[RMDB]
RNA sequence: GGGAACGACUCGAGUAGAGUCGAAAAAUUAUGGCAUGGAAAUGGAUAUAAAACCUAGCAUGCCUCAGCAGCUAUGUGCUCCCACAAUCCCCGUGUGGAAAUAGAAUUGGGCUGAUGUAUCUCAGUGAGUGCAGAGGUACAGACAAGAGGCAGACGAACCCGAUGAGUGAUUCGUCACUCAUCGGGUAAAAGAAACAACAACAACAAC
Reactivity to 2A3 in 0.01 (KOAc 150mM, MgCl2 10mM, bicine 150mM(pH8.5), 24C), signal-to-noise 1, nucleotides 027 to 156: a000u140u140a070u120g000g010c000a000u000g050g030a000a200a080u230g000g010a050u090a060u020a270a120a000a010c000c020u000a020g140c120a000u000g000c000c020u060c000a070g050c000a000g010c020u020a000u230g100u020g010c010u030c000c020c030a010c000a010a100u040c000c000c050c100g030u000g000u060g000g190a000a280a000u170a000g200a130a140u090u230g100g000g000c020u060g010a000u060g030u010a020u000c020u000c020a020g060u070g070a100g080u020g100c010a000g000a000g060g000u020a020c000a000g020a010c000a080a000g010a000g060g020c000a000g030a040c060g040a030
The record gives the reactivity of an RNA of 207 nucleotides to 2A3. The RNA was probed in 150 mM KOAc, 10 mM MgCl2 and 150 mM bicine (pH 8.5) at 24 C. Reactivities are rounded to 0.1 and cut off at 0 and 3.